[RMDB]
An RNA of 177 nucleotides, treated with 2A3 and read out base by base. Source: RMDB library RFM100, as collected in RNAgym. Reactivities are given for positions 27 through 126. The reactions ran in a buffer of 150 mM KOAc, 10 mM MgCl2 and 150 mM bicine (pH 8.5), at 24 C. For 2A3, 561 sequencing reads were counted.

RNA sequence: GGGAACGACUCGAGUAGAGUCGAAAACUCCCGCCCCAUGCGGCCCAAGGCUCAGGGAAGCAAAGUGGCUCAAUAAAAACUUUUGAUAUUAGUUUUUAUGGGUAUUUGCACUCUGGUCAGGAGAGCUCGCGGUUUGUUAAUUCGUUAACAAACCGCGAAAAGAAACAACAACAACAAC
Reactivity to 2A3 in 0.01 (KOAc 150mM, MgCl2 10mM, bicine 150mM(pH8.5), 24C), signal-to-noise 2, nucleotides 027 to 126: c010u000c000c000c000g000c000c050c010c010a080u090g030c000g000g050c010c000c000a090a160g040g000c090u100c180a010g000g010g000a090a050g010c000a000a000a040g160u190g200g020c000u010c020a140a050u000a000a000a010a000a000c000u000u060u060u300g100a080u140a180u300u100a000g000u010u000u000u000u010a010u000g000g020g010u050a100u030u000u000g000c000a000c000u060c010u030g060g030u010c000a050g000g080a010g010a010g010c030u020